Structure probing data (DMS and 2A3) for a 177-nucleotide construct. The RNA was probed in 150 mM KOAc, 10 mM MgCl2 and 150 mM bicine (pH 8.5) at 24 C. As a SHAPE reagent, 2A3 marks flexible, mostly unpaired nucleotides at the ribose 2'-OH.
[RMDB]
RNA sequence: GGGAACGACUCGAGUAGAGUCGAAAAGAAAGGCAGCGAGUGCAGCCCACGCAGUGGCAUGCUUUUGCAUGCCCAGUCGAGCCCACGACUUAGGGCAGCUGCGGCACUGAGGGCAGCUGCCGAAAGACGGAUCCAUAAAUUUCGAUUUAUGGAUCCGAAAAGAAACAACAACAACAAC
Reactivity to DMS in 0.01 (KOAc 150mM, MgCl2 10mM, bicine 150mM(pH8.5), 24C), signal-to-noise 4, nucleotides 027 to 126: g000a100a110a190g020g030c020a020g020c030g000a100g020u000g020c070a110g040c010c020c020a150c210g010c100a070g040u000g020g010c020a000u000g000c010u000u000u000u010g010c000a020u000g000c000c000c030a030g000u000c000g000a120g000c000c000c000a300c040g010a010c010u000u000a110g020g000g030c020a110g020c050u000g020c080g000g000c130a070c100u000g010a090g010g000g030c020a120g010c020u000g000c010c010g000a020a070a130g000a200
Reactivity to 2A3 in 0.01 (KOAc 150mM, MgCl2 10mM, bicine 150mM(pH8.5), 24C), signal-to-noise 3, nucleotides 027 to 126: g060a020a070a010g020g000c010a000g020c020g090a060g120u130g040c070a020g020c000c010c010a050c030g090c030a030g010u110g140g000c010a030u020g000c000u190u250u220u300g000c010a010u010g000c000c000c000a000g000u020c000g000a020g000c020c010c000a030c010g040a010c000u080u170a060g020g090g000c000a020g010c040u070g010c000g020g000c090a060c130u100g070a140g020g050g000c010a000g000c000u010g000c000c000g000a000a000a000g040a000